[RMDB]
RNA sequence: GGGAACGACUCGAGUAGAGUCGAAAAGAUAUGGAAUUCGUUCUGUAUUAUCAUGACAUUCGGAAACGAAUGAGAACAUGUGUACAGAACGCCAAGUAUAUUCAUGAUCACAAGAAUUCCUAAGUCACUGAUACUAGAUCUUCGGAUCUAGUAUCAGAAAAGAAACAACAACAACAAC
Reactivity to DMS in 0.01 (KOAc 150mM, MgCl2 10mM, bicine 150mM(pH8.5), 24C), signal-to-noise 3, nucleotides 027 to 126: g060a100u000a110u000g000g010a040a080u010u010c020g000u010u010c000u020g000u010a010u000u010a130u010c000a020u010g010a210c010a020u000u000c010g020g000a160a130a250c000g000a010a000u000g010a190g030a140a130c010a000u000g020u010g000u040a000c000a000g000a020a010c000g040c280c210a080a070g030u000a080u010a120u010u000c060a070u000g010a040u000c080a190c200a080a180g000a140a160u000u000c010c000u000a050a120g010u000c130a210
Reactivity to 2A3 in 0.01 (KOAc 150mM, MgCl2 10mM, bicine 150mM(pH8.5), 24C), signal-to-noise 3, nucleotides 027 to 126: g030a010u090a040u110g020g070a030a100u090u040c050g020u020u000c020u020g020u040a080u190u250a150u300c030a020u000g100a220c010a010u020u000c000g000g040a020a110a110c050g050a000a000u100g050a110g080a220a040c010a010u010g030u030g000u000a000c000a010g020a000a020c000g000c010c010a100a050g180u140a160u070a120u300u100c130a090u210g300a220u120c090a030c080a300a140g060a140a240u000u060c020c010u040a060a090g130u110c070a020

Chemical mapping of a 177-nucleotide RNA with DMS and 2A3. For 2A3 the reverse transcriptase was SuperScript II with manganese. For DMS, 1,945 sequencing reads were counted. It was measured as part of the RMDB library TTRINS. The 2A3 profile rests on 2,480 reads.